[RMDB]
RNA sequence: GGGAACGACUCGAGUAGAGUCGAAAAGUGAUGGGGCUUGCUUUCAGCGCUCUUCAGAUCUCUGAAAAGAGUCGGUGCAUUCAUUAAAGCUACGUAAUGCGACGAUCUUGUUUGCAGCUGAUACCGCGAUUAGGUGGUGGUUCGCCACCACCUAAUCAAAAGAAACAACAACAACAAC
Reactivity to DMS in 0.01 (KOAc 150mM, MgCl2 10mM, bicine 150mM(pH8.5), 24C), signal-to-noise 2, nucleotides 027 to 126: g010u000g010a110u020g000g000g040g010c080u000u000g010c070u000u000u000c100a040g000c060g000c000u000c080u010u000c050a090g000a100u000c100u000c000u010g000a080a070a060a110g010a020g010u010c010g000g000u000g010c010a010u000u010c010a100u000u000a100a090a230g000c110u010a060c110g000u010a040a040u000g000c010g010a040c050g010a050u020c030u000u000g030u000u020u040g000c030a080g010c030u010g000a050u000a120c120c090g030c180
Reactivity to 2A3 in 0.01 (KOAc 150mM, MgCl2 10mM, bicine 150mM(pH8.5), 24C), signal-to-noise 1, nucleotides 027 to 126: g030u030g020a090u110g000g040g030g050c050u070u110g040c040u000u050u130c030a000g000c010g020c040u000c000u030u000c000a000g030a070u070c050u000c000u120g090a060a030a030a030g020a000g030u030c000g000g040u020g000c020a000u000u090c010a000u040u220a150a190a050g010c080u090a040c110g080u150a040a030u020g020c040g000a000c010g020a040u020c010u090u060g050u120u050u070g020c030a030g000c020u020g000a020u040a080c020c010g050c050

Chemical mapping of a 177-nucleotide RNA with DMS and 2A3. The data come from the RNA Mapping Database (RMDB), library RFMREP. The reactions ran in a buffer of 150 mM KOAc, 10 mM MgCl2 and 150 mM bicine (pH 8.5), at 24 C. Reactivities are given for positions 27 through 126.